[RMDB]
RNA sequence: GGGAACGACUCGAGUAGAGUCGAAAAGUUAACCCGUUCGCGGGUUAACAAAGAAACUGGAAGGCGGGGCGAGCUGCAGCCGCAGUGAAUCAAAUGCAGCAAAAACCGUAAGCUUCGGCUUACGGAACAUCCUUAGAAACUUCGGUUUCUAAGGAUGAAAAGAAACAACAACAACAAC
Reactivity to 2A3 in 0.01 (KOAc 150mM, MgCl2 10mM, bicine 150mM(pH8.5), 24C), signal-to-noise 2, nucleotides 027 to 126: g000u000u000a000a000c000c010c000g010u030u030c220g010c000g070g010g000u000u010a000a000c000a010a000a000g010a010a130a020c070u090g050g090a130a040g180g050c130g040g060g010g010c020g020a040g020c000u000g000c010a000g020c000c010g000c020a020g050u070g130a020a030u120c040a020a000a110u080g000c000a010g000c010a000a000a000a050a070c010c000g000u000a000a000g010c000u010u090c200g050g000c000u010u010a000c000g000g000a000a000
Reactivity to DMS in 0.01 (KOAc 150mM, MgCl2 10mM, bicine 150mM(pH8.5), 24C), signal-to-noise 3, nucleotides 027 to 126: g010u000u000a000a000c000c000c000g020u000u020c190g040c010g000g010g000u010u000a020a000c000a060a090a080g000a080a130a070c040u000g010g000a090a090g000g000c080g000g000g000g000c010g000a120g010c000u000g000c010a110g010c030c030g000c030a060g010u000g000a080a120u010c110a040a050a050u000g010c000a020g020c020a070a090a070a110a100c000c000g010u000a020a000g000c000u010u020c230g010g000c000u000u000a010c000g000g000a020a070